[RMDB]
Chemical mapping of a 177-nucleotide RNA with DMS and 2A3. The reactions ran in a buffer of 150 mM KOAc, 10 mM MgCl2 and 150 mM bicine (pH 8.5), at 24 C. Source: RMDB library OK2TST, as collected in RNAgym. DMS adducts were read by reverse transcription with MarathonRT. The DMS profile rests on 766 reads.
RNA sequence: GGGAACGACUCGAGUAGAGUCGAAAAGCGCUUAUUUCCAGAUGAUGAUGCCGCAAAUAUGGCUGAAUGAGCGUGAACUGAUGCCUAACUACGGCAUUGUCGAGGAUCACACCUUUAUUCAAAAAGACACUCACCCUCGAUUCGUCGAGGGUGAGUGAAAAGAAACAACAACAACAAC
Reactivity to DMS in 0.01 (KOAc 150mM, MgCl2 10mM, bicine 150mM(pH8.5), 24C), signal-to-noise 1, nucleotides 027 to 126: g040c050g020c040u000u020a070u000u000u020c010c080a110g050a090u000g020a000u000g000a010u000g000c000c000g030c090a040a050a100u010a050u010g000g020c030u000g010a080a040u000g010a040g010c070g050u000g000a010a170c110u000g010a180u000g000c000c010u010a160a130c140u010a170c070g000g000c010a000u010u000g010u000c050g020a040g000g000a050u000c030a160c280a110c030c000u000u000u000a150u020u000c170a040a000a010a070a140g000a140
Reactivity to 2A3 in 0.01 (KOAc 150mM, MgCl2 10mM, bicine 150mM(pH8.5), 24C), signal-to-noise 2, nucleotides 027 to 126: g040c000g000c040u080u000a020u110u070u000c020c010a060g030a300u170g000a000u050g000a000u040g010c010c010g060c080a110a070a020u250a090u090g020g000c010u030g090a020a020u040g000a070g050c100g000u060g040a080a040c030u070g000a010u090g000c000c000u030a070a070c110u060a010c010g000g060c010a010u010u010g010u000c000g060a010g010g010a020u060c020a010c000a000c100c000u120u080u070a230u140u110c070a070a070a000a040a000g030a010